RNA sequence: GGGAACGACUCGAGUAGAGUCGAAAAACGACGGCAUCUGCAAAUGGGAGGAGGGCAGUCCCACGCCUGUGCUGCACGUGGGCUGGGCCACCUUUCUUGUGCAGUCCCUAGGCCGUUUUGAGGGACACUCGGUUCUAAGAUUCGUCUUAGAACCGAGAAAAGAAACAACAACAACAAC
Reactivity to DMS in 0.01 (KOAc 150mM, MgCl2 10mM, bicine 150mM(pH8.5), 24C), signal-to-noise 3, nucleotides 027 to 126: a120c090g000a030c010g010g010c020a090u000c010u000g010c010a030a050a040u000g000g000g000a020g000g000a090g010g000g000c010a020g010u020c020c010c000a010c020g020c130c050u000g030u000g010c160u010g010c070a120c030g010u000g000g000g010c010u010g010g010g020c020c010a070c000c000u000u000u000c010u000u000g000u000g010c000a020g000u000c010c010c010u010a090g010g010c000c010g000u000u000u010u010g020a090g020g010g000a230c210a160
Reactivity to 2A3 in 0.01 (KOAc 150mM, MgCl2 10mM, bicine 150mM(pH8.5), 24C), signal-to-noise 1, nucleotides 027 to 126: a000c060g010a000c000g010g010c020a100u040c050u050g010c030a020a060a110u130g000g000g020a000g000g010a010g020g000g000c000a010g070u300c000c010c000a010c010g040c000c060u180g040u150g180c080u110g030c030a010c040g000u010g000g000g000c010u050g000g050g210c010c000a040c000c000u000u030u000c000u000u050g080u020g000c000a000g000u040c030c000c010u040a080g070g000c000c010g000u040u010u060u090g020a030g010g000g040a010c010a030
An RNA of 177 nucleotides, treated with DMS and 2A3 and read out base by base. It was measured as part of the RMDB library OK2TST.